[RMDB]
RNA sequence: GGGAACGACUCGAGUAGAGUCGAAAAUACUGGUCUCGACAGGGCGGACAAAGGUGCGCAGGCAACUCGUCAGGCGAUCGACGUUAAUGAAGCAAAUCCAUAAUUGCCAAUGAUGAGCAAUUCGCUAACCAAGGAUCACAUUCGUGUGAUCCUUGGUAAAAGAAACAACAACAACAAC
Reactivity to 2A3 in 0.01 (KOAc 150mM, MgCl2 10mM, bicine 150mM(pH8.5), 24C), signal-to-noise 3, nucleotides 027 to 126: u090a010c080u030g090g000u000c050u010c050g020a050c030a050g040g020g000c010g040g000a020c100a060a180a010g080g010u070g000c020g000c000a000g080g020c010a020a030c060u040c020g010u000c000a020g020g050c010g060a050u030c020g040a100c040g030u040u060a040a020u150g030a020a000g050c020a100a000a000u050c050c000a000u040a170a010u050u000g010c000c000a080a130u250g120a150u060g000a060g020c010a010a020u050u050c020g010c050u030a000
Reactivity to DMS in 0.01 (KOAc 150mM, MgCl2 10mM, bicine 150mM(pH8.5), 24C), signal-to-noise 2, nucleotides 027 to 126: u010a050c100u000g040g030u000c010u000c090g010a170c070a120g010g010g020c020g030g000a070c080a060a050a050g000g040u000g030c070g020c060a110g000g000c020a030a070c110u000c070g000u010c010a060g050g010c000g000a020u000c060g050a060c060g000u000u000a020a050u010g000a090a100g030c040a060a060a100u080c080c090a050u080a050a020u010u000g000c030c000a170a090u050g020a120u020g020a080g000c060a040a070u000u010c180g020c200u030a060